Record summary: Chemical mapping of a 177-nucleotide RNA with DMS and 2A3. Source: RMDB library OK2TST, as collected in RNAgym. The RNA was probed in 150 mM KOAc, 10 mM MgCl2 and 150 mM bicine (pH 8.5) at 24 C. The 2A3 profile rests on 1,768 reads. Values cover nucleotides 27 to 126. In probing experiments dimethyl sulfate is read out at A N1 and C N3, which are open when not base-paired.
RNA sequence: GGGAACGACUCGAGUAGAGUCGAAAAAGAUUAUAAUCUGAAUUCCCCACUUUUGGAAGAUCCUUCAAGAUUAAUGAUCGAAUGGUUAACGACGGGGAACAGGCCCAGCCGACUAAAUUUGACAGACACAAUUAACCGUAUUCGUACGGUUAAUUGUAAAAGAAACAACAACAACAAC
Reactivity to DMS in 0.01 (KOAc 150mM, MgCl2 10mM, bicine 150mM(pH8.5), 24C), signal-to-noise 4, nucleotides 027 to 126: a050g010a100u010u010a140u010a120a070u020c000u000g010a070a300u000u010c000c000c010c120a150c150u010u000u000u010g010g010a060a120g000a060u000c070c020u000u010c070a070a080g010a110u010u010a070a080u010g000a070u000c020g000a070a040u000g010g010u000u010a060a190c080g000a070c170g010g010g000g000a080a060c110a050g010g000c020c020c020a120g000c070c040g000a040c070u000a050a070a090u010u020u010g010a070c110a110g000a160c230
Reactivity to 2A3 in 0.01 (KOAc 150mM, MgCl2 10mM, bicine 150mM(pH8.5), 24C), signal-to-noise 3, nucleotides 027 to 126: a000g090a050u220u170a130u250a300a110u000c010u000g050a070a210u030u050c010c090c050c020a120c080u260u240u090u120g070g050a110a020g020a090u050c000c020u030u010c060a180a080g000a070u060u100a160a060u210g050a050u020c010g050a040a030u070g010g040u050u020a050a070c070g160a020c050g040g000g000g000a010a030c010a030g050g040c000c020c030a000g030c010c000g020a080c060u150a050a140a200u160u140u170g040a050c040a070g060a040c020